[RMDB]
RNA sequence: GGGAACGACUCGAGUAGAGUCGAAAAAUUACCAAGAACUGAUCUGACGAUCAAGCACGUGAGCAGGAGUAUCGAAGAGGAUUAGAGACCCACGUAGUUCCUUGCAGUCAACGAUGCCAACGUAGUGUUGGCUACCUAUAUUCGUAUAGGUAGCCAAAAAAGAAACAACAACAACAAC
Reactivity to 2A3 in 0.01 (KOAc 150mM, MgCl2 10mM, bicine 150mM(pH8.5), 24C), signal-to-noise 8, nucleotides 027 to 126: a010u160u130a090c010c010a020a040g050a080a040c020u030g010a020u010c020u080g130a040c060g000a030u030c010a000a020g050c030a020c050g050u040g020a030g010c010a010g010g030a010g020u060a040u140c040g050a100a030g100a130g070g000a020u040u070a080g040a010g040a110c000c010c000a020c020g020u020a020g040u050u010c000c000u040u140g000c000a040g080u050c020a060a060c040g070a100u070g010c010c000a040a010c040g080u120a070g060u050g050
Reactivity to DMS in 0.01 (KOAc 150mM, MgCl2 10mM, bicine 150mM(pH8.5), 24C), signal-to-noise 9, nucleotides 027 to 126: a080u020u030a150c020c020a150a110g010a110a110c120u010g010a020u000c010u010g030a130c180g000a030u000c030a090a140g000c040a040c040g000u000g000a100g000c020a030g010g010a060g010u010a070u010c030g010a090a100g010a150g020g000a080u000u010a110g020a180g000a070c030c010c010a090c050g000u010a140g010u020u010c010c000u000u020g030c030a090g010u010c090a060a040c050g010a080u010g010c020c100a050a080c150g000u010a070g010u020g010